An RNA of 177 nucleotides, treated with DMS and read out base by base. DMS adducts were read by reverse transcription with MarathonRT. The DMS profile rests on 605 reads. The reactions ran in a buffer of 150 mM KOAc, 10 mM MgCl2 and 150 mM bicine (pH 8.5), at 24 C.
RNA sequence: GGGAACGACUCGAGUAGAGUCGAAAAUCAAAAAUACCGCCUGAGCGCUGCAAGAUAUAGUUGAGGCGCAGGGGAUUAAUACGGUGGAGAGGCUUAAAUUCGCCUUCUAAAUCCCACCAGCGGGAGAACGCUACUACUACUUCGGUAGUAGUAGCGUAAAAGAAACAACAACAACAAC
Reactivity to DMS in 0.01 (KOAc 150mM, MgCl2 10mM, bicine 150mM(pH8.5), 24C), signal-to-noise 1, nucleotides 027 to 126: u090c040a010a080a120a100a040u000a100c020c000g000c100c130u040g040a220g090c010g000c000u000g000c080a010a040g020a110u000a090u030a100g000u000u000g010a210g030g070c000g020c000a210g030g010g000g000a080u000u000a030a120u000a070c120g030g020u000g000g020a050g020a080g000g000c010u010u000a020a110a170u000u000c170g000c000c000u000u000c220u000a040a080a020u010c050c000c000a200c290c050a100g010c030g000g000g000a010g000a130